[RMDB]
Chemical mapping of a 207-nucleotide RNA with 2A3. Reactivities are given for positions 27 through 156. The 2A3 profile rests on 340 reads. The RNA was probed in 150 mM KOAc, 10 mM MgCl2 and 150 mM bicine (pH 8.5) at 24 C.
RNA sequence: GGGAACGACUCGAGUAGAGUCGAAAAAUCAUGACGAUCGCGCUGGUGCUCAUCGGCGCUCCUCCUCGUCCUGCUCGUUGUCGGCCGACUCGUCCUGGGCGUCGGAGGCGGCGAUGCGGUCGGCCCGCUUCCAGGGCAGCAGGGACAUCACGACACCGAGAAUACACUCCUUCGGGAGUGUAUUCUCAAAAGAAACAACAACAACAAC
Reactivity to 2A3 in 0.01 (KOAc 150mM, MgCl2 10mM, bicine 150mM(pH8.5), 24C), signal-to-noise 1, nucleotides 027 to 156: a000u250c180a100u110g080a050c080g000a060u240c040g000c020g000c020u040g000g080u070g000c120u110c270a090u140c150g050g010c000g010c000u000c000c000u040c010c000u030c000g070u030c000c000u050g000c000u000c080g100u060u030g050u030c040g000g130c000c000g000a030c010u040c040g020u100c050c040u130g000g240g040c040g040u120c040g000g060a030g000g050c000g020g020c000g000a130u200g000c100g030g110u020c000g140g040c000c000c000g000c000u000u190c020c000a210g000g020g000c000a010g010c050a010g000g000g000a010c170a060u300c220a000c210g100a020c060a000c300c020